Structure probing data (2A3 and DMS) for a 177-nucleotide construct. Reactivities are given for positions 27 through 126. It was measured as part of the RMDB library RFM100.

[RMDB]
RNA sequence: GGGAACGACUCGAGUAGAGUCGAAAAAGCAUAUUUUGCCCAGGCGGCGCUCGACCGCCACUGCAAGAAAUAGCGUCGUUAAAGGUGCCGCUGAUGGAACAGCAUGGGGUCGAGCCGGUAUGUCAGGGGCUACAACGUAUUUCGAUACGUUGUAGCCAAAAGAAACAACAACAACAAC
Reactivity to 2A3 in 0.01 (KOAc 150mM, MgCl2 10mM, bicine 150mM(pH8.5), 24C), signal-to-noise 2, nucleotides 027 to 126: a000g050c090a030u020a110u050u090u090u090g090c030c000c000a000g030g000c020g010g000c050g000c060u000c020g000a000c000c000g190c050c010a010c010u020g010c040a120a000g020a060a150a000u150a030g000c000g020u020c020g000u040u200a170a010a000g220g000u050g100c020c000g030c010u040g110a060u040g040g010a050a010c020a030g020c000a020u020g000g000g000g000u000c000g000a000g020c000c000g010g050u040a050u140g020u010c000a010g110g000
Reactivity to DMS in 0.01 (KOAc 150mM, MgCl2 10mM, bicine 150mM(pH8.5), 24C), signal-to-noise 2, nucleotides 027 to 126: a060g030c110a050u050a080u000u040u000u000g000c010c000c000a110g000g010c020g020g010c080g020c030u010c020g010a000c010c000g040c000c000a020c120u000g030c000a070a160g000a200a120a050u000a000g000c000g000u000c020g020u010u010a040a140a170g000g010u040g000c010c010g000c010u020g020a130u040g020g010a290a140c300a050g000c030a130u000g000g010g000g010u000c000g000a000g050c060c130g030g020u030a050u000g010u000c050a180g000g000
For DMS, 2,518 sequencing reads were counted.
2A3 adducts were read by reverse transcription with SuperScript II with manganese.